[RMDB]
RNA sequence: GGGAACGACUCGAGUAGAGUCGAAAACGCGGAGGAGCGCGUCCCGUGGUUGCCAUGGAGACCGCCGGACUGCGGAGGCCACAAACUGUGCGAAGGGGGAGGCGAGGGGCGGGGCCGCGGGAGGCCCCCCCAAUCGCAUUUUCGAAUGCGAUUGGGGAAAAGAAACAACAACAACAAC
Reactivity to DMS in 0.01 (KOAc 150mM, MgCl2 10mM, bicine 150mM(pH8.5), 24C), signal-to-noise 3, nucleotides 027 to 126: c030g030c010g010g020a140g010g000a150g020c020g010c110g010u000c010c010c080g040u000g010g000u000u000g040c040c040a050u000g000g000a130g000a030c020c000g010c020c060g000g000a100c030u000g030c030g010g000a130g000g000c030c050a060c100a090a100a100c130u000g010u010g010c070g020a110a070g000g000g020g010g010a150g000g000c110g010a100g010g010g000g020c110g020g010g000g010c030c020g010c070g000g000g010a060g010g000c000c020c020
Reactivity to 2A3 in 0.01 (KOAc 150mM, MgCl2 10mM, bicine 150mM(pH8.5), 24C), signal-to-noise 2, nucleotides 027 to 126: c020g000c020g020g020a110g040g050a240g100c060g010c080g000u000c030c000c010g000u000g000g020u180u120g110c090c050a110u100g060g030a140g010a100c010c000g010c030c020g040g040a060c040u100g000c040g030g070a040g090g000c060c000a040c060a060a180a100c130u130g010u080g070c050g100a060a130g060g010g010g000g010a070g040g000c080g010a050g000g000g000g010c050g000g000g000g010c030c000g010c020g000g060g020a020g030g030c000c010c020